[RMDB]
RNA sequence: GGGAACGACUCGAGUAGAGUCGAAAAUUGAAGGUAACCGUUGGGGAAACACUACUUCAAUAAGUGGAGCUUAAGCAUUCCUAGUUUGCGGUAAUAUUGAUUAUCCUUAACAGCCUCAAGAGGGUUGACACGGGGUAUAUUUCGAUAUACCCCGUGUAAAAGAAACAACAACAACAAC
Reactivity to DMS in 0.01 (KOAc 150mM, MgCl2 10mM, bicine 150mM(pH8.5), 24C), signal-to-noise 2, nucleotides 027 to 126: u010u000g000a060a060g000g010u000a090a080c090c090g030u010u000g000g000g000g000a070a070a090c090a120c120u010a090c030u000u000c040a010a070u010a120a110g010u000g010g000a100g000c060u000u010a060a110g020c120a150u010u000c010c010u000a120g000u010u000u010g010c040g000g000u010a060a070u000a080u010u000g000a100u010u000a120u000c010c030u010u020a050a180c030a040g000c000c020u000c040a050a080g030a180g000g000g020u010u010g000
Reactivity to 2A3 in 0.01 (KOAc 150mM, MgCl2 10mM, bicine 150mM(pH8.5), 24C), signal-to-noise 1, nucleotides 027 to 126: u050u030g030a090a030g030g000u050a070a030c060c040g040u050u020g020g000g000g000a030a090a000c070a060c020u060a010c010u030u100c040a100a100u110a200a020g180u090g080g060a020g050c040u160u140a090a000g020c030a080u020u060c020c000u010a070g170u030u130u100g000c000g000g000u030a030a040u070a140u060u040g060a050u080u060a060u070c010c020u050u010a060a020c010a000g000c000c000u020c010a000a070g070a050g010g030g030u030u080g040
Structure probing data (DMS and 2A3) for a 177-nucleotide construct. The DMS profile rests on 1,743 reads. For DMS the reverse transcriptase was MarathonRT.